Conditions: 150 mM KOAc, 10 mM MgCl2 and 150 mM bicine (pH 8.5), 24 C. This 177-nucleotide RNA was probed chemically with DMS and 2A3. Reactivities are given for positions 27 through 126. The DMS profile rests on 2,588 reads. It was measured as part of the RMDB library OK1LIB.

RNA sequence: GGGAACGACUCGAGUAGAGUCGAAAAGAAUAUAAGAGCGCAGUAAAUGUGAGAGCAAACUGCGCCCGGACUGUAGGAUCCGGUGGCACAGCAACGCUCAUUCACAAAACGCUGUGCCACGUGAAGAGCCAUGGGUAUCAUUCGUGAUACCCAUGGCAAAAGAAACAACAACAACAAC
Reactivity to DMS in 0.01 (KOAc 150mM, MgCl2 10mM, bicine 150mM(pH8.5), 24C), signal-to-noise 2, nucleotides 027 to 126: g000a120a110u020a110u030a000a030g010a130g000c000g010c020a030g000u000a010a070a050u000g000u010g010a160g000a230g000c030a020a130a060c000u000g000c010g000c000c000c010g000g000a050c080u030g020u030a150g000g000a240u020c000c000g020g020u000g000g010c000a000c000a000g010c020a170a130c190g020c030u010c070a060u060u050c200a090c260a050a040a040a060c210g000c000u000g000u000g000c000c000a000c000g020u080g050a080a070g020a140
Reactivity to 2A3 in 0.01 (KOAc 150mM, MgCl2 10mM, bicine 150mM(pH8.5), 24C), signal-to-noise 5, nucleotides 027 to 126: g050a050a020u210a010u060a100a030g030a020g000c000g000c000a000g010u010a030a080a070u070g030u020g030a090g000a010g060c000a010a300a000c020u010g020c000g000c000c000c000g020g010a020c020u160g110u280a080g140g030a070u010c010c000g020g000u000g000g000c000a000c000a000g000c010a020a070c040g080c060u060c020a090u300u200c060a040c030a040a110a080a000c080g000c000u000g000u000g000c000c000a010c020g110u150g030a090a020g040a030